[RMDB]
RNA sequence: GGGAACGACUCGAGUAGAGUCGAAAAAAUGCCUGUGCUUUUCGACGUUUAGUUUAGUCUGCAAGAUAGAAUUGAUGUCUCGAAGACAGGUACAUCAGCUUUUAGAGUUCCUGUUCAAGAUCAGCAACUGAAGUAAGCACUUCGGUGCUUACUUCAGAAAAGAAACAACAACAACAAC
Reactivity to DMS in 0.01 (KOAc 150mM, MgCl2 10mM, bicine 150mM(pH8.5), 24C), signal-to-noise 1, nucleotides 027 to 126: a070a030u000g010c010c000u000g010u000g050c040u000u000u010u010c090g010a020c000g060u020u000u010a070g070u000u000u000a300g040u000c010u020g030c190a120a040g010a010u000a170g000a010a030u010u000g010a040u000g000u010c020u000c150g040a020a040g010a040c040a010g010g030u000a070c140a100u010c070a050g000c070u010u010u000u010a110g010a090g000u000u000c010c010u020g010u000u000c120a070a070g010a080u000c070a070g030c130a050a150
Structure probing data (DMS) for a 177-nucleotide construct.
The RNA was probed in 150 mM KOAc, 10 mM MgCl2 and 150 mM bicine (pH 8.5) at 24 C.
It was measured as part of the RMDB library RFMREP.